[RMDB]
RNA sequence: GGGAACGACUCGAGUAGAGUCGAAAAUGACGUGAAACUGCUGACUCAUACAUACUGACACCGGUUGCUCAACAGGCUGUGUGGGACAAUAGAAUAACAAGGCUGUCAAUUUGAGCUUGACGGCUGCAAAACCUGCAGUACUUCGGUACUGCAGGAAGUACUAGUUCAUCUUCGGAUGAACUAGUACAAAAGAAACAACAACAACAAC
Reactivity to 2A3 in 0.01 (KOAc 150mM, MgCl2 10mM, bicine 150mM(pH8.5), 24C), signal-to-noise 6, nucleotides 027 to 156: u110g020a010c060g030u050g050a090a020a050c060u080g010c030u030g050a060c010u020c030a020u030a080c010a010u120a050c030u070g050a030c020a040c080c030g080g000u060u080g010c020u020c050a050a030c010a040g050g000c040u030g010u010g000u030g040g020g020a010c020a010a090u080a100g120a100a040u150a100a040c080a130a030g030g000c010u010g000u010c000a000a010u030u040u110g020a010g030c010u000u000g000a000c000g020g000c010u010g000c000a010a030a050a110c000c000u000g000c000a000g000u000a010c000u010u060c110g070g000u000a000c000u000g000c000a000g000g000a000a000
Reactivity to DMS in 0.01 (KOAc 150mM, MgCl2 10mM, bicine 150mM(pH8.5), 24C), signal-to-noise 2, nucleotides 027 to 156: u000g010a070c090g040u000g020a050a090a070c020u000g000c040u000g000a140c030u000c030a080u010a090c060a060u000a090c010u000g020a070c060a060c030c040g000g000u000u000g000c030u000c010a090a100c040a050g020g020c040u000g050u010g010u010g010g020g000a100c040a050a100u000a100g010a090a160u000a090a100c080a110a280g010g020c020u010g010u000c000a040a030u000u000u030g020a100g010c300u000u000g000a020c060g030g000c000u000g000c040a060a040a070a200c000c000u010g000c010a010g000u000a000c000u010u010c250g050g010u000a000c000u020g000c000a000g000g000a000a040